[RMDB]
RNA sequence: GGGAACGACUCGAGUAGAGUCGAAAAGAGCACAGGUUCUCGCGGAAAUGGACGAUGCAGAGCUUGCCGGAUUGCCGGCUGAUAUGCAGAACGAGGCUCGCCGAGCAAGAGCACAACACGUCGAGCCCCGACGAGUUUGAUUCGUCAAACUCGUCGGAAAAGAAACAACAACAACAAC
Reactivity to 2A3 in 0.01 (KOAc 150mM, MgCl2 10mM, bicine 150mM(pH8.5), 24C), signal-to-noise 1, nucleotides 027 to 126: g040a000g010c040a000c040a020g080g030u030u030c000u020c040g000c030g080g090a050a050a150u210g010g040a020c020g070a050u060g000c060a000g010a020g120c030u070u030g000c020c010g080g030a150u080u300g130c000c000g030g000c040u040g020a040u050a070u280g010c040a000g040a120a040c110g040a050g000g060c010u000c030g000c020c000g020a050g010c030a150a080g000a080g230c050a010c020a110a050c000a010c010g050u020c010g020a010g010c060c030
Reactivity to DMS in 0.01 (KOAc 150mM, MgCl2 10mM, bicine 150mM(pH8.5), 24C), signal-to-noise 1, nucleotides 027 to 126: g020a120g040c050a060c070a070g020g000u000u020c020u000c020g030c010g000g000a010a070a090u010g020g010a100c050g050a080u000g050c020a030g000a110g010c050u000u010g010c000c000g010g000a300u000u000g020c000c050g040g010c030u000g000a130u000a010u010g030c030a110g000a130a090c100g010a150g000g000c000u010c000g000c020c000g000a070g000c150a040a060g000a070g020c090a050c160a060a030c090a100c050g000u000c040g000a070g020c090c000